[RMDB]
RNA sequence: GGGAACGACUCGAGUAGAGUCGAAAAAUGUACAGACACUCUUAAUUAUCGUCUUUGGUUUACUUGCUUUUAUCAUGGAUUCUAUCGGUGGGGUCAUGUUUGCCAAAUUUCUCAAUCUCUUCCGAAAAGAGAAGAUUAAUCCAAUGAUUGGCGCUGACUUUUAUACGGGGUUCGCCCCGUAUAAAAGAAAAGAAACAACAACAACAAC
Reactivity to 2A3 in 0.01 (KOAc 150mM, MgCl2 10mM, bicine 150mM(pH8.5), 24C), signal-to-noise 3, nucleotides 027 to 156: a010u060g030u080a040c040a030g040a020c020a030c040u120c040u070u090a080a110u120u100a190u180c060g070u040c040u080u060u070g010g000u090u070u090a040c030u080u130g020c000u190u100u130u100a040u090c030a050u050g000g030a030u100u020c040u100a070u130c040g070g000u020g010g020g000g020u020c020a000u080g050u050u080u050g000c000c000a000a080a030u030u110u030c020u010c020a080a120u030c010u000c000u090u020c080c040g110a130a110a040a050g060a000g000a010a010g000a000u090u150a050a050u040c060c080a070a110u040g010a080u000u020g020g000c040g000c070u070g020a060
Reactivity to DMS in 0.01 (KOAc 150mM, MgCl2 10mM, bicine 150mM(pH8.5), 24C), signal-to-noise 2, nucleotides 027 to 156: a070u000g020u010a120c050a070g020a100c040a070c030u020c110u020u000a070a060u000u000a090u000c080g000u000c040u010u000u010g000g040u000u010u000a080c060u000u000g030c050u000u020u000u000a070u000c030a060u000g020g000a060u000u000c050u000a050u000c040g030g040u000g020g030g010g070u000c030a060u000g000u000u010u010g080c020c020a040a080a150u000u000u000c010u000c010a060a110u000c020u000c000u000u000c030c090g000a120a070a080a050g010a010g060a020a030g000a070u010u000a050a090u000c040c030a030a170u010g020a210u000u000g020g030c010g000c100u010g000a150
Background: An RNA of 207 nucleotides, treated with 2A3 and DMS and read out base by base. Reactivities are given for positions 27 through 156. DMS (dimethyl sulfate) methylates the pairing face of unpaired adenines and cytosines. The RNA was probed in 150 mM KOAc, 10 mM MgCl2 and 150 mM bicine (pH 8.5) at 24 C.